[RMDB]
RNA sequence: GGGAACGACUCGAGUAGAGUCGAAAAUGGACUUUUUACAGUUCCUACUUAUCCGGUUUUAACGCUGUUUUAUUGGCGCAAAGGUUUACGGACAAACAACUAAUAAUUAAACCUUUUGUGUGCGAAAAUUGGACGUUUAGGUUCGCCUAAACGUCAACAACAACGAUAUCUUCGGAUAUCGUUGUUGAAAAGAAACAACAACAACAAC
Reactivity to 2A3 in 0.01 (KOAc 150mM, MgCl2 10mM, bicine 150mM(pH8.5), 24C), signal-to-noise 4, nucleotides 027 to 156: u080g020g020a030c030u090u070u100u140u270a130c220a040g020u110u100c030c010u040a110c010u160u180a060u090c020c020g040g000u030u030u000u090a090a030c040g030c040u040g130u150u120u080u130a110u120u170g010g000c010g000c010a030a000a000g000g020u000u020u010a010c020g020g030a040c060a050a220a000c020a030a060c100u170a040a150u130a150a030u240u120a030a000a010c000c000u040u060u060u100g070u000g030u040g040c080g080a070a040a070a100u110u100g090g010a000c000g000u010u000u000a010g030g020u040u040c140g030c040c000u010a010a010a010c010g000u000c000a000a000
Reactivity to DMS in 0.01 (KOAc 150mM, MgCl2 10mM, bicine 150mM(pH8.5), 24C), signal-to-noise 2, nucleotides 027 to 156: u000g000g010a070c020u000u000u000u000u000a090c160a100g010u000u000c000c020u000a130c100u000u000a110u000c000c010g000g010u000u000u000u000a250a060c000g010c000u010g020u020u020u030u000a110u020u020g020g000c010g000c000a020a050a030g030g000u000u000u010a170c030g000g000a110c020a090a070a160c070a070a170c090u010a070a080u010a050a110u010u020a020a020a030c000c000u000u000u000u000g010u000g030u000g020c030g000a060a060a110a200u000u000g000g010a010c000g010u000u000u000a000g000g000u000u000c300g000c000c000u000a000a020a000c010g010u000c010a000a040
Conditions: 150 mM KOAc, 10 mM MgCl2 and 150 mM bicine (pH 8.5), 24 C. An RNA of 207 nucleotides, treated with 2A3 and DMS and read out base by base. In probing experiments dimethyl sulfate is read out at A N1 and C N3, which are open when not base-paired. The data come from the RNA Mapping Database (RMDB), library M2RFPK. 2A3 adducts were read by reverse transcription with SuperScript II with manganese.